[RMDB]
RNA sequence: GGGAACGACUCGAGUAGAGUCGAAAACACAUUCUAUUCGUAGAAUGUGGAACGUAGAGUGAUCGACAGCGUCGCAGCUAUGUCGAACGAGGAAGAGCGCGCAGGGAUCGGGCUUCGGCCCGAUCAAGCUACGCUACUGGUUCGCCAGUAGCGUAGCAAAAGAAACAACAACAACAAC
Reactivity to 2A3 in 0.01 (KOAc 150mM, MgCl2 10mM, bicine 150mM(pH8.5), 24C), signal-to-noise 1, nucleotides 027 to 126: c010a010c000a000u000u000c010u010a030u050u100c170g100u040a000g000a020a000u020g000u010g000g030a080a010c020g010u070a030g040a030g060u090g040a090u010c000g060a020c020a020g030c020g110u170c080g040c100a090g000c000u070a060u180g030u010c010g020a050a050c010g020a040g050g060a090a070g000a020g080c020g030c000g060c040a030g050g050g000a010u000c000g000g000g000c000u040u050c200g060g000c000c000c000g000a000u010c000a000a000
Reactivity to DMS in 0.01 (KOAc 150mM, MgCl2 10mM, bicine 150mM(pH8.5), 24C), signal-to-noise 3, nucleotides 027 to 126: c000a010c000a010u000u000c000u000a030u000u000c230g010u000a010g000a020a000u000g010u010g000g010a080a080c100g010u010a080g000a120g020u010g000a100u000c010g000a050c030a060g000c040g000u000c260g000c100a140g010c050u010a060u010g020u000c020g030a020a100c080g010a090g000g010a090a030g000a050g010c020g010c110g020c080a080g030g000g030a000u000c000g010g010g010c010u000u010c180g020g010c000c000c000g010a000u000c000a070a040
Annotation: This 177-nucleotide RNA was probed chemically with 2A3 and DMS. The data come from the RNA Mapping Database (RMDB), library M2PK50. DMS adducts were read by reverse transcription with MarathonRT. The DMS profile rests on 2,581 reads. The reactions ran in a buffer of 150 mM KOAc, 10 mM MgCl2 and 150 mM bicine (pH 8.5), at 24 C.